An RNA of 207 nucleotides, treated with DMS and 2A3 and read out base by base. The DMS profile rests on 2,884 reads.

RNA sequence: GGGAACGACUCGAGUAGAGUCGAAAAUGAUCGGAGAUGGUUGUGACCUCGGCCUCGGCGAGGAGGAAGGGGGCACGGGCCUGCCAUACCCUUGCCAGUUCUGCGACAAGUCCUUCAUCCGCUUGAGCUACUUGAAGAGGCACGAGCAGAUCCACAGUAUAAGAAUAGCCUUCGGGCUAUUCUUAUAAAAAGAAACAACAACAACAAC
Reactivity to DMS in 0.01 (KOAc 150mM, MgCl2 10mM, bicine 150mM(pH8.5), 24C), signal-to-noise 1, nucleotides 027 to 156: u010g020a100u010c100g020g010a090g020a130u000g000g000u010u050g030u000g020a070c010c000u000c010g010g020c030c020u000c020g000g000c120g000a070g000g010a070g010g020a080a110g000g030g020g000g020c010a020c060g050g060g010c040c030u010g040c040c060a120u000a090c030c070c010u000u010g010c000c020a160g020u000u000c090u000g080c110g000a080c060a040a050g030u010c000c040u010u000c050a080u000c000c030g000c050u000u020g010a100g010c010u000a050c110u010u000g000a150a080g010a090g000g000c010a060c060g010a060g000c010a030g000a110u000c020c010a040c080a170g010
Reactivity to 2A3 in 0.01 (KOAc 150mM, MgCl2 10mM, bicine 150mM(pH8.5), 24C), signal-to-noise 2, nucleotides 027 to 156: u190g010a040u080c110g010g010a030g030a010u040g060g260u100u110g030u050g170a300c030c020u040c040g030g030c020c020u010c020g000g000c000g040a060g070g000a020g000g020a010a030g080g010g000g020g000c050a010c030g000g040g000c010c050u060g140c040c000a060u120a060c000c000c020u000u000g020c010c010a080g040u110u050c080u260g000c020g090a080c050a070a070g030u030c000c020u040u050c040a110u040c020c000g050c050u110u300g010a020g010c000u070a100c060u130u150g110a130a040g000a070g010g030c040a040c040g000a000g040c000a000g030a020u000c020c000a020c000a010g090

DMS adducts were read by reverse transcription with MarathonRT.
The reactions ran in a buffer of 150 mM KOAc, 10 mM MgCl2 and 150 mM bicine (pH 8.5), at 24 C.